[RMDB]
RNA sequence: GGGAACGACUCGAGUAGAGUCGAAAAUAACGUGCGCGUUUAAGUUUGGGGUUAGUUUUAGAUUUAGGUUUACAUUUAUAUGCUCGGUUGAAGGUGAAUUUUAGCUUAGACUUAAGUAUGGCGUGUAAUGUGGGUUAAAAUUUAAAUGGAAGGUGGGCUAGUUUAUAUCUUUCGAGAUAUGAAUUAGAAAAGAAACAACAACAACAAC
Reactivity to DMS in 0.01 (KOAc 150mM, MgCl2 10mM, bicine 150mM(pH8.5), 24C), signal-to-noise 2, nucleotides 027 to 156: u000a060a090c000g000u000g000c040g020c030g020u010u000u010a060a130g010u000u000u000g020g010g030g000u010u010a060g010u000u000u000u000a080g010a150u000u010u000a100g030g000u000u000u010a040c050a080u000u000u000a090u010a080u020g020c020u000c070g040g000u000u010g010a060a080g030g020u000g010a050a070u000u000u010u000a070g020c000u000u000a150g000a080c020u000u010a020a110g020u000a050u000g010g020c080g020u000g020u000a020a100u010g020u000g010g010g000u010u000a030a020a050a100u010u000u000a040a050a120u010g000g010a050a050g020g020u010g000g020g000
Structure probing data (DMS) for a 207-nucleotide construct. The reactions ran in a buffer of 150 mM KOAc, 10 mM MgCl2 and 150 mM bicine (pH 8.5), at 24 C. For DMS, 4,842 sequencing reads were counted. The data come from the RNA Mapping Database (RMDB), library OK3TST.